[RMDB]
RNA sequence: GGGAACGACUCGAGUAGAGUCGAAAACUCUUUUUGCGGACGUCAUCCCCUCUCUACUGCUGAAAAGAAGGAUGCCGACUCGCACCGGUGCCACGCACCGCACACCACAAAUCUAAGAGAGAGGGAGACCCAGGAUAUCAUUCGUGAUAUCCUGGGUAAAAGAAACAACAACAACAAC
Reactivity to DMS in 0.01 (KOAc 150mM, MgCl2 10mM, bicine 150mM(pH8.5), 24C), signal-to-noise 3, nucleotides 027 to 126: c040u000c000u000u000u010u010u000g010c060g000g000a050c100g010u020c050a090u000c060c000c010c010u000c000u010c020u000a140c050u000g000c130u040g020a060a030a080a050g000a150a060g000g000a100u010g020c030c040g000a070c040u010c030g000c010a040c070c000g010g000u010g010c040c090a170c130g000c010a040c120c030g030c040a030c040a090c060c040a100c160a060a070a050u020c050u020a080a060g000a000g020a060g000a080g010g020g000a110g000
Reactivity to 2A3 in 0.01 (KOAc 150mM, MgCl2 10mM, bicine 150mM(pH8.5), 24C), signal-to-noise 6, nucleotides 027 to 126: c020u050c000u030u070u030u110u160g070c050g050g030a050c050g050u030c010a110u060c010c000c020c000u000c000u000c010u080a300c050u090g140c040u120g050a030a070a040a080g130a040a060g060g010a060u080g020c020c020g050a080c030u020c120g010c010a040c020c000g030g010u010g030c040c080a130c120g010c020a010c010c000g000c000a030c010a030c070c030a060c050a060a080a040u040c020u110a140a010g020a000g010a000g000a040g040g020g010a020g020